[RMDB]
RNA sequence: GGGAACGACUCGAGUAGAGUCGAAAAGCGACAAGACGGACUUCAAGGAAUGGGAAGGCACGCCCUAUUUCGAUGGUUGCCUGCCGAUCGAGGUGAUGGCUGAGCGCGGACCGGAAACGCUGCGUCAUCAUGGAUACUAGUUCGCUAGUAUCCAUGAAAAAGAAACAACAACAACAAC
Reactivity to 2A3 in 0.01 (KOAc 150mM, MgCl2 10mM, bicine 150mM(pH8.5), 24C), signal-to-noise 9, nucleotides 027 to 126: g040c020g050a040c040a060a040g040a020c030g010g010a020c030u040u020c100a070a070g040g020a110a040u090g010g010g040a050a050g050g000c030a010c040g040c010c000c010u050a100u040u090u060c090g050a090u120g050g000u060u060g020c010c020u030g000c010c000g070a080u060c040g030a040g050g040u080g030a080u060g030g000c040u040g020a050g010c040g000c010g030g010a040c030c010g010g040a070a080a010c050g010c030u050g010c020g050u040c010a050
Reactivity to DMS in 0.01 (KOAc 150mM, MgCl2 10mM, bicine 150mM(pH8.5), 24C), signal-to-noise 9, nucleotides 027 to 126: g010c050g010a080c090a080a090g020a090c050g010g010a070c050u000u010c080a100a150g010g010a060a050u000g010g000g000a090a070g010g010c060a050c130g010c090c020c040u000a070u010u000u000c070g010a110u010g010g010u000u000g010c040c030u000g010c030c020g000a050u000c060g000a070g010g010u000g010a070u000g010g010c030u000g000a080g010c050g010c040g010g000a120c060c040g000g000a060a060a100c090g010c020u000g000c070g010u000c080a130